[RMDB]
RNA sequence: GGGAACGACUCGAGUAGAGUCGAAAAGAGGAACUACGAAUGGGUGCCACUGGUGUACCGGCUGUUCGAAAGAGCACGUGCCGGGCAGCCACGCACCACGGGGUAAGAGCUGAACGCAUCUAAGCUCUUUACGCAUUACGUUCGCGUAAUGCGUAAAAAAAGAAACAACAACAACAAC
Reactivity to 2A3 in 0.01 (KOAc 150mM, MgCl2 10mM, bicine 150mM(pH8.5), 24C), signal-to-noise 4, nucleotides 027 to 126: g080a030g040g060a030a010c050u090a060c080g090a190a110u150g090g000g000u020g000c000c010a060c080u010g000g000u020g060u230a120c000c010g010g000c010u010g010u000u010c020g010a100a060a040g030a020g010c020a020c220g110u070g010c000c000g010g000g000c000a010g020c000c000a020c080g010c000a000c000c000a000c000g020g000g020g020u030a030a030g010a000g000c020u040g050a090a040c070g020c100a040u030c050u050a020a010g010c000u010c000
Reactivity to DMS in 0.01 (KOAc 150mM, MgCl2 10mM, bicine 150mM(pH8.5), 24C), signal-to-noise 6, nucleotides 027 to 126: g000a090g010g010a060a100c070u000a060c060g010a140a100u020g010g010g010u000g010c000c040a080c120u000g000g030u000g000u020a300c010c010g000g020c010u010g000u000u000c000g000a150a090a150g000a020g000c010a060c300g020u010g000c030c000g010g010g000c180a300g010c000c010a010c150g010c020a000c000c000a060c100g000g000g020g030u010a070a040g000a010g010c000u010g000a090a130c100g000c090a050u010c040u000a190a030g000c000u000c000
Record summary: Source: RMDB libraries RFM100 and RFMREP, as collected in RNAgym. Structure probing data (2A3 and DMS) for a 177-nucleotide construct. High DMS reactivity at an A or C suggests that its Watson-Crick edge is free. Reactivities are given for positions 27 through 126. Values are in units of 0.01, from 0 to 300, in steps of 10. 2A3 adducts were read by reverse transcription with SuperScript II with manganese.